[RMDB]
RNA sequence: GGGAACGACUCGAGUAGAGUCGAAAAACUGUUUGUUAUGGUGAUGUCGCUCAAAUAUCUUGGGCUUGUCGACUGAACGAUUUUGAACCCAAGUAUUCGGAAGUGUCCAGGGCAUUACCCAUAUCGGUGCCGAUAUUAGGUUCGCCUAAUAUCGGCAAAAAGAAACAACAACAACAAC
Reactivity to DMS in 0.01 (KOAc 150mM, MgCl2 10mM, bicine 150mM(pH8.5), 24C), signal-to-noise 2, nucleotides 027 to 126: a050c070u000g000u010u000u000g010u000u000a040u000g010g000u000g000a030u000g040u000c010g010c030u020c130a120a030a030u000a000u010c020u010u000g000g010g000c060u030u010g030u000c040g020a220c230u000g010a110a170c020g000a020u000u000u000u000g020a100a090c030c000c000a010a010g020u000a010u010u000c020g020g010a100a190g010u000g000u010c070c050a130g000g010g010c010a010u000u000a050c110c020c070a030u000a000u000c040g020g030